[RMDB]
RNA sequence: GGGAACGACUCGAGUAGAGUCGAAAAUGGGAGGCGACCGAUUGAAGCCAAUUGCAGACAUCAUGUGUGACUGAGUAUUGGUGUAGGCGAUAGCCUAAAAUCACCCGCCAGCAGAUAAUAUCUGCUGGCUUGCUGCAAUAUUCGUAUUGCAGCAAGCAAAAGAAACAACAACAACAAC
Reactivity to 2A3 in 0.01 (KOAc 150mM, MgCl2 10mM, bicine 150mM(pH8.5), 24C), signal-to-noise 9, nucleotides 027 to 126: u090g020g020g020a020g020g000c010g030a070c030c000g230a290u020u110g060a070a010g000c000c000a010a010u020u050g030c010a010g040a060c000a030u090c070a150u250g180u090g020u020g130a080c010u010g010a030g160u080a050u020u020g020g000u300g020u190a020g020g010c010g020a040u080a020g000c000c000u030a060a030a000a030u080c030a060c020c000c000g010c010c000a000g000c000a000g010a010u060a110a060u100a240u100c000u000g000c000u000g000
Reactivity to DMS in 0.01 (KOAc 150mM, MgCl2 10mM, bicine 150mM(pH8.5), 24C), signal-to-noise 9, nucleotides 027 to 126: u020g000g010g040a050g010g010c020g010a090c220c020g010a080u020u010g000a100a300g000c010c010a010a010u000u110g000c010a010g000a100c020a010u000c050a120u020g010u030g020u000g000a090c010u000g000a060g010u010a020u000u000g000g010u000g000u000a230g000g010c010g000a050u030a210g010c000c000u000a030a050a100a060u010c130a130c010c010c030g010c030c000a000g010c000a000g000a010u000a040a050u020a300u000c000u000g000c000u000g000